About this RNA:
Structure probing data (DMS and 2A3) for a 177-nucleotide construct. The RNA was probed in 150 mM KOAc, 10 mM MgCl2 and 150 mM bicine (pH 8.5) at 24 C. For 2A3 the reverse transcriptase was SuperScript II with manganese.

RNA sequence: GGGAACGACUCGAGUAGAGUCGAAAAGAUAUGGACCUUGUUACAGCGAAGAACUCGGAAACGAGGGAGCUGAACACUGGGUCCUAAGUCAAAUCGAUCACUAGAGGUUCGCCUCUAGUGAUCGAAAGACACGAUAACAGUUCGCUGUUAUCGUGUCAAAAGAAACAACAACAACAAC
Reactivity to DMS in 0.01 (KOAc 150mM, MgCl2 10mM, bicine 150mM(pH8.5), 24C), signal-to-noise 2, nucleotides 027 to 126: g000a010u010a300u000g010g000a020c010c010u000u000g010u000u000a300c020a030g000c010g030a130a160g020a120a250c000u000c000g000g000a110a150a190c000g000a030g010g000g000a080g010c000u000g000a020a110c300a040c210u010g000g010g010u000c000c000u000a000a030g000u000c020a070a130a100u010c000g000a000u000c000a000c000u000a000g000a000g010g020u000u010c300g020c000c000u000c000u000a010g000u000g010a000u000c000g000a000a060a090
Reactivity to 2A3 in 0.01 (KOAc 150mM, MgCl2 10mM, bicine 150mM(pH8.5), 24C), signal-to-noise 3, nucleotides 027 to 126: g030a010u060a060u170g000g010a010c000c000u000u020g040u040u110a300c010a010g030c030g220a300a030g050a120a010c000u000c000g010g070a120a060a060c010g000a000g020g000g020a010g020c020u020g050a040a010c050a000c090u060g060g000g000u000c010c000u000a120a010g030u030c050a000a010a130u060c000g010a010u020c010a000c000u000a000g000a000g040g040u110u110c300g110c090c000u030c000u010a000g000u000g000a000u010c000g000a000a000a000
Background: For DMS the reverse transcriptase was MarathonRT. DMS (dimethyl sulfate) methylates the pairing face of unpaired adenines and cytosines.